[RMDB]
RNA sequence: GGGAACGACUCGAGUAGAGUCGAAAAGGACAAGGUUUAUUGAUCGGUUCAGCUGAAUUGCCACCAGUGCAUGUAGACACUAUCCCUUCAUUGAAGUUAGAGAGUUCAUGCAAUUUUGACAUACAUAUCCUGCAGUGCGAUUCGUCGCACUGCAGGAAAAAGAAACAACAACAACAAC
Reactivity to DMS in 0.01 (KOAc 150mM, MgCl2 10mM, bicine 150mM(pH8.5), 24C), signal-to-noise 1, nucleotides 027 to 126: g030g060a080c040a110a060g020g010u010u000u000a040u020u000g000a100u000c020g010g080u000u000c120a090g050c030u010g010a040a020u000u010g030c010c030a050c090c090a180g010u000g000c040a060u000g010u000a190g000a090c160a010c020u000a070u000c080c090c010u000u020c060a130u000u000g010a040a080g020u000u000a110g020a120g010a080g010u000u000c030a020u020g000c040a110a120u050u000u000u000g000a150c060a050u010a060c220a100u000a140